Description
Chemical mapping of a 177-nucleotide RNA with DMS and 2A3. The data come from the RNA Mapping Database (RMDB), library OK1LIB.
[RMDB]
RNA sequence: GGGAACGACUCGAGUAGAGUCGAAAACUGGCUGCGCGGAUGGGGCGCUGACGCCGGCGGCAUGACGAGGGCAGCCCGAGUGACACGGCCGAGUGCUCCAGACUCCGCACUGUGAAGGGCGCCCGCAAUAUGAUGCCGCUUUCGAGCGGCAUCAUAUAAAAGAAACAACAACAACAAC
Reactivity to DMS in 0.01 (KOAc 150mM, MgCl2 10mM, bicine 150mM(pH8.5), 24C), signal-to-noise 1, nucleotides 027 to 126: c020u000g000g000c110u000g020c100g000c010g030g010a070u010g000g000g080g020c030g040c000u010g030a220c300g050c040c000g030g000c060g030g020c040a030u000g000a130c180g000a090g030g000g030c080a210g070c000c010c010g000a230g030u020g000a060c060a070c110g020g000c000c080g000a040g010u000g010c060u000c000c000a060g000a130c040u000c060c100g000c000a030c090u000g000u000g010a110a130g000g000g040c040g000c010c000c030g040c080a070
Reactivity to 2A3 in 0.01 (KOAc 150mM, MgCl2 10mM, bicine 150mM(pH8.5), 24C), signal-to-noise 1, nucleotides 027 to 126: c030u040g010g100c000u040g060c110g030c060g100g040a050u060g050g000g060g000c040g000c000u090g050a130c030g010c000c000g000g080c040g000g020c060a050u140g020a100c020g090a160g000g010g000c000a060g090c000c060c000g050a090g030u050g090a090c000a000c130g050g030c020c000g020a000g000u020g010c040u050c000c000a020g020a080c040u060c000c000g020c000a030c040u100g070u070g090a110a030g000g000g000c010g000c040c000c000g000c000a000